[RMDB]
RNA sequence: GGGAACGACUCGAGUAGAGUCGAAAAUGGACAUGAACGCCGCCUCGCAUCGGUCAUGUCUGCCGAUUUAGCAUUAACGGUAGAUACACUGCUUUCUGCGGCAAUACAUGAAGAUGGAGCAACUAGCGACAUAGCGGCUAUUCGUAGCCGCUAUGUCAAAAGAAACAACAACAACAAC
Reactivity to DMS in 0.01 (KOAc 150mM, MgCl2 10mM, bicine 150mM(pH8.5), 24C), signal-to-noise 4, nucleotides 027 to 126: u010g020g000a200c050a060u040g000a080a130c180g000c040c050g030c070c100u010c120g040c090a000u020c030g000g010u000c050a040u000g030u000c100u010g000c000c000g000a100u000u000u010a050g020c080a060u000u000a040a120c080g010g010u000a070g000a090u000a070c240a090c150u000g000c060u000u000u010c070u000g000c010g010g000c020a010a080u000a070c040a020u010g030a050a100g000a030u000g000g010a120g000c130a100a100c070u010a090g030c280
Reactivity to 2A3 in 0.01 (KOAc 150mM, MgCl2 10mM, bicine 150mM(pH8.5), 24C), signal-to-noise 4, nucleotides 027 to 126: u110g020g040a020c010a080u070g040a130a030c090g000c020c010g020c010c050u000c040g100c020a030u030c020g050g070u020c020a020u070g000u000c000u000g000c010c000g030a080u010u030u090a110g040c080a150u120u080a080a030c030g060g020u020a030g020a060u070a030c070a010c060u020g030c010u040u060u050c040u130g100c000g000g020c000a020a040u090a020c010a020u050g000a030a040g030a050u090g020g030a020g050c020a060a110c030u050a020g040c000
Notes
This 177-nucleotide RNA was probed chemically with DMS and 2A3. The data come from the RNA Mapping Database (RMDB), library OK2TST. For 2A3, 4,497 sequencing reads were counted.